[RMDB]
RNA sequence: GGGAACGACUCGAGUAGAGUCGAAAAAAGCGUCGUUGCGACCAAAUAAGCGCCGAUUCACAUCAGCGCGACUACGCUCUCGCUGCCUAAGCGACGGCUAGUCUGUCAGACCGGGAACGCCCUCGGCCCGGACCCUGGCAUCAGCUAGAGGGAUCCACUUUACAUGGAUCUUCGGAUCCAUGUAAAGAAAAGAAACAACAACAACAAC
Reactivity to 2A3 in 0.01 (KOAc 150mM, MgCl2 10mM, bicine 150mM(pH8.5), 24C), signal-to-noise 2, nucleotides 027 to 156: a030a000g130c120g000u080c040g050u110u160g040c060g000a030c020c040a090a140a090u250a170a050g000c010g000c030c030g040a060u130u180c130a080c020a150u020c010a010g020c010g000c000g020a000c010u020a020c110g000c000u000c000u000c020g010c000u020g060c060c130u120a090a010g000c010g010a020c010g000g020c000u000a000g010u030c010u010g010u000c010a000g010a010c000c000g000g000g000a010a000c020g020c000c000c000u000c000g010g000c000c000c000g040g000a070c130c020c010u020g010g000c030a080u100c040a110g190c040u190a070g000a000g000g000g000a000u060c020c030a050
Source information
The record gives the reactivity of an RNA of 207 nucleotides to 2A3. The reactions ran in a buffer of 150 mM KOAc, 10 mM MgCl2 and 150 mM bicine (pH 8.5), at 24 C. For 2A3 the reverse transcriptase was SuperScript II with manganese. It was measured as part of the RMDB library ARCHII.